[RMDB]
RNA sequence: GGGAACGACUCGAGUAGAGUCGAAAAUUGUAAAUAUGUGGCAGCAGGUAAUCAACCUUUAGGUAACUGUGUUAAAAUGUUGACAGUGCAUAAUGGUAGUGGUUUUGCUAUAACUUCAAAGCCAAGUCCUACUCCUGACCAGGAUUCUUAUGGAGGAAUUCUAAGCUGUAUUCGUACAGCUUAGAAUAAAAGAAACAACAACAACAAC
Reactivity to DMS in 0.01 (KOAc 150mM, MgCl2 10mM, bicine 150mM(pH8.5), 24C), signal-to-noise 4, nucleotides 027 to 156: u010u020g000u000a080a090a110u010a090u000g020u010g010g030c020a090g040c030a030g010g040u000a050a110u000c060a080a090c010c030u000u000u000a040g030g040u000a070a080c030u010g000u010g020u020u000a050a100a120a140u010g010u000u000g010a070c030a050g040u000g010c030a050u000a040a060u000g000g030u010a080g020u010g000g000u000u000u000u000g030c050u000a100u000a060a100c110u000u000c020a030a050a110g020c040c040a050a110g020u000c050c020u000a100c030u000c030c010u000g010a090c040c060a090g010g000a130u000u000c050u000u000a160u010g020g000a070g010g020a090
Reactivity to 2A3 in 0.01 (KOAc 150mM, MgCl2 10mM, bicine 150mM(pH8.5), 24C), signal-to-noise 5, nucleotides 027 to 156: u090u040g020u040a020a030a090u150a090u150g070u020g040g000c020a020g000c030a020g000g060u080a050a070u080c040a020a050c010c000u040u040u080a050g020g000u030a090a030c020u030g020u000g020u090u050a090a130a080a120u130g050u050u060g050a010c010a010g020u020g040c010a020u020a080a050u130g020g010u030a050g070u070g060g000u010u020u080u000g020c020u040a030u040a300a090c080u080u070c060a030a030a000g000c000c000a020a010g040u020c000c010u010a060c020u000c010c010u030g020a040c020c020a020g010g040a010u090u080c030u050u130a070u080g030g000a020g010g030a010
Chemical mapping of a 207-nucleotide RNA with DMS and 2A3. Conditions: 150 mM KOAc, 10 mM MgCl2 and 150 mM bicine (pH 8.5), 24 C. 2A3 adducts were read by reverse transcription with SuperScript II with manganese. It was measured as part of the RMDB library OK3TST. The 2A3 profile rests on 3,676 reads.